[RMDB]
RNA sequence: GGGAACGACUCGAGUAGAGUCGAAAAAAAGAUAUGGAACCGUGGGAGGAUCAGACUACGAAGAACUUCUAUCGGAAACGAUAGAAGGGAGUAGUUGGGAUCCGAAGAACACGGUUCCUAAGUCAAACAUAUAUAUUACCUUCGGGUAAUAUAUAUGAAAAGAAACAACAACAACAAC
Reactivity to DMS in 0.01 (KOAc 150mM, MgCl2 10mM, bicine 150mM(pH8.5), 24C), signal-to-noise 4, nucleotides 027 to 126: a070a070a120g010a040u010a300u010g000g000a010a000c000c000g020u000g020g000g010a140g020g010a000u000c000a300g000a020c000u010a000c000g000a080a170g000a160a190c000u000u000c000u000a000u000c000g000g020a100a080a110c000g010a010u010a000g010a010a000g010g010g010a070g010u000a000g000u000u000g000g020g000a000u010c000c010g000a080a110g000a140a200c010a010c000g000g000u000u000c000c000u010a010a060g010u000c020a120a130a190
Reactivity to 2A3 in 0.01 (KOAc 150mM, MgCl2 10mM, bicine 150mM(pH8.5), 24C), signal-to-noise 2, nucleotides 027 to 126: a000a000a010g070a030u100a050u140g030g010a020a010c010c010g000u000g000g040g000a130g000g010a010u000c000a000g020a030c010u010a000c050g300a300a080g010a070a040c010u000u020c000u000a000u000c010g010g020a080a040a030c000g000a000u020a010g000a000a000g000g000g020a020g000u010a000g010u020u010g170g210g000a000u000c000c000g040a030a000g000a010a000c000a000c000g000g010u010u000c000c000u000a010a000g020u000c020a020a210a010